RNA sequence: GGGAACGACUCGAGUAGAGUCGAAAAUCCUAGAGAGCUUGGCCGUCGGGCCUUAUACCCGACUUGCUGAGUUUCUCUAGGAGAGUCCCUUUCCCAGCCCUGAGGCGGCUGGGCAAUAAAAGCCUCAAAAACUACCACUGGUUCGCCAGUGGUAGAAGAUAAGCAUAUACUUCGGUAUAUGCUUAUCAAAAGAAACAACAACAACAAC
Reactivity to 2A3 in 0.01 (KOAc 150mM, MgCl2 10mM, bicine 150mM(pH8.5), 24C), signal-to-noise 2, nucleotides 027 to 156: u000c000c000u000a000g000a000g000a000g010c000u010u010g020g000c010c030g010u000c010g000g030g000c010c040u040u100a120u130a030c000c000c000g010a010c020u030u160g000c010u020g000a000g000u020u300u010c000u000c000u000a000g000g010a010g000a000g010u020c000c000c000u000u090u020c000c010c000a000g000c000c000c030u080g000a010g000g020c020g000g010c000u000g000g050g000c000a000a020u130a030a020a000a010g000c000c000u000c000a050a020a000a040a040c000u010a000c000c000a000c010u010g010g070u060u030c170g050c080c000a010g000u000g000g000u000a000g000a000a000
Reactivity to DMS in 0.01 (KOAc 150mM, MgCl2 10mM, bicine 150mM(pH8.5), 24C), signal-to-noise 1, nucleotides 027 to 156: u010c020c010u000a030g010a050g000a050g000c020u010u000g000g050c020c300g010u010c000g030g030g000c020c090u010u000a110u020a060c000c000c010g010a010c020u010u000g000c040u020g020a020g020u000u000u010c010u000c010u000a020g010g010a040g000a110g000u000c020c010c030u000u000u000c010c000c000a080g010c010c020c000u000g010a110g030g050c090g010g020c000u000g040g000g010c060a040a040u000a100a140a170a120g010c030c000u010c060a110a100a080a230a220c010u010a010c000c000a040c060u010g020g060u000u010c300g010c030c000a000g010u000g040g010u000a000g000a000a070